RNA sequence: GGGAACGACUCGAGUAGAGUCGAAAACAGAUGGACCUGAGUUCAAGUCCAGGGUCUAUCUCAUACUGCUUAAAGACAAAGAAAUUCACUUAGACUCUCUGAGCUGCAGUUUGCUCACCUGGAAAAAUGGCAACAAUAAUGAAUGUCUGGAAAAUGAUAAUGCACUUUUAUUCGUAAAAGUGCAUUAAAAAGAAACAACAACAACAAC
Reactivity to 2A3 in 0.01 (KOAc 150mM, MgCl2 10mM, bicine 150mM(pH8.5), 24C), signal-to-noise 6, nucleotides 027 to 156: c050a010g010a010u010g010g000a000c000c010u060g050a080g100u130u170c110a080a020g060u030c030c020a010g010g010g000u010c000u010a010u000c010u000c000a060u070a090c000u030g050c010u090u110a120a090a020g070a080c050a050a130a020g100a090a170a130u160u110c050a050c110u090u090a070g050a100c010u020c020u010c070u120g010a010g040c020u050g000c040a040g010u050u050u090g030c020u030c010a040c010c020u010g030g050a040a030a030a040a080u140g020g020c010a030a020c020a040a140u200a110a020u130g070a090a030u080g040u060c060u030g040g060a040a140a030a010u140g050a030
Reactivity to DMS in 0.01 (KOAc 150mM, MgCl2 10mM, bicine 150mM(pH8.5), 24C), signal-to-noise 4, nucleotides 027 to 156: c050a060g000a040u000g020g010a020c000c000u000g030a160g030u000u000c120a120a170g020u000c040c040a300g000g020g020u000c010u000a040u000c020u010c040a120u000a110c060u000g000c020u000u000a080a130a120g010a110c050a110a150a110g010a050a070a070u010u000c050a040c080u000u000a130g010a090c050u000c040u010c070u000g010a060g030c030u000g010c050a120g010u000u000u000g020c020u000c050a020c020c030u000g010g000a030a040a110a080a070u010g000g000c010a050a050c020a040a090u010a030a080u000g010a060a070u000g010u000c020u000g040g000a070a060a080a050u000g000a240